Overview:
Conditions: 150 mM KOAc, 10 mM MgCl2 and 150 mM bicine (pH 8.5), 24 C. This 177-nucleotide RNA was probed chemically with DMS and 2A3. 2A3 adducts were read by reverse transcription with SuperScript II with manganese. For 2A3, 104,766 sequencing reads were counted.

[RMDB]
RNA sequence: GGGAACGACUCGAGUAGAGUCGAAAAGCAGGGUCGAUGAUAACCCUCUCUGAAGCACGGAAUGGCCUGCAGGAUGGCAGGGGGGGUGAACAAUGCGUCGAGAGGAGACGCCGUCUCGUGCCGUCUCCUCCGUUACAAGAUUCGUCUUGUAACGGAGAAAAGAAACAACAACAACAAC
Reactivity to DMS in 0.01 (KOAc 150mM, MgCl2 10mM, bicine 150mM(pH8.5), 24C), signal-to-noise 9, nucleotides 027 to 126: g010c070a080g010g010g020u000c030g010a090u000g010a110u010a180a100c020c020c000u000c010u000c010u000g000a120a110g010c040a090c090g010g010a200a100u010g010g010c040c030u000g010c050a140g010g010a120u010g010g010c020a030g000g000g010g000g000g000g010u000g000a080a110c180a070a080u010g010c040g010u000c040g010a170g010a090g010g000a080g000a020c010g010c030c030g000u000c050u000c040g010u000g010c080c020g000u000c010u000c010
Reactivity to 2A3 in 0.01 (KOAc 150mM, MgCl2 10mM, bicine 150mM(pH8.5), 24C), signal-to-noise 9, nucleotides 027 to 126: g030c020a010g030g010g030u040c020g050a100u100g010a020u110a110a030c000c010c000u000c000u000c000u020g080a130a030g040c040a040c150g040g120a180a210u190g160g080c030c020u060g020c020a050g090g130a110u160g120g020c010a010g010g000g000g000g000g000g000u020g010a040a020c050a070a090u160g030c010g010u030c020g030a060g020a070g240g070a080g010a020c000g000c010c000g030u010c020u010c030g100u070g010c020c010g010u000c000u010c010